[RMDB]
RNA sequence: GGGAACGACUCGAGUAGAGUCGAAAAAUUCGCACCUUUAGUCACAUUCUCGUCUACGUUUCGAGAACGAAAAACUUCCAGAAGGGCAGGGAGAGCUACGAUGCUAUCGCCAAGAAGAACGAUCAGAUUCUUGCGCUCAUCGCAAUCUGUGUCUCUACGGUAAAUACGUAUUCGUACGUAUUUACCGAAAAGAAACAACAACAACAAC
Reactivity to 2A3 in 0.01 (KOAc 150mM, MgCl2 10mM, bicine 150mM(pH8.5), 24C), signal-to-noise 9, nucleotides 027 to 156: a000u170u110c060g020c030a170c010c020u040u060u140a090g030u110c060a050c020a140u060u000c010u010c010g030u020c080u170a190c160g090u080u050u070c020g010a010g020a040a030c050g120a060a010a020a050a070c030u090u020c020c010a020g030a110a030g050g020g000c020a020g040g040g000a040g000a010g020c040u070a020c060g020a020u040g000c020u060a050u130c060g020c040c010a000a010g010a020a000g050a090a040c100g050a160u130c030a030g040a150u040u020c010u030u060g020c080g000c040u050c060a040u070c020g000c030a040a120u020c050u080g070u010g080u050c000u000c010u050a040
Reactivity to DMS in 0.01 (KOAc 150mM, MgCl2 10mM, bicine 150mM(pH8.5), 24C), signal-to-noise 4, nucleotides 027 to 156: a130u010u000c050g030c020a090c000c020u000u000u000a080g010u020c070a180c050a150u000u010c000u000c010g030u010c060u010a150c200g020u000u010u000c010g000a030g030a030a090c030g000a090a080a070a070a080c070u000u000c040c010a170g020a090a040g000g010g050c040a080g000g030g000a100g010a120g040c040u000a010c040g000a050u000g010c300u000a030u000c020g030c030c020a010a040g010a030a050g000a090a120c060g000a110u000c070a120g010a150u000u000c020u000u000g010c030g030c040u000c060a020u000c010g000c020a050a060u000c040u010g020u000g010u000c000u000c030u000a300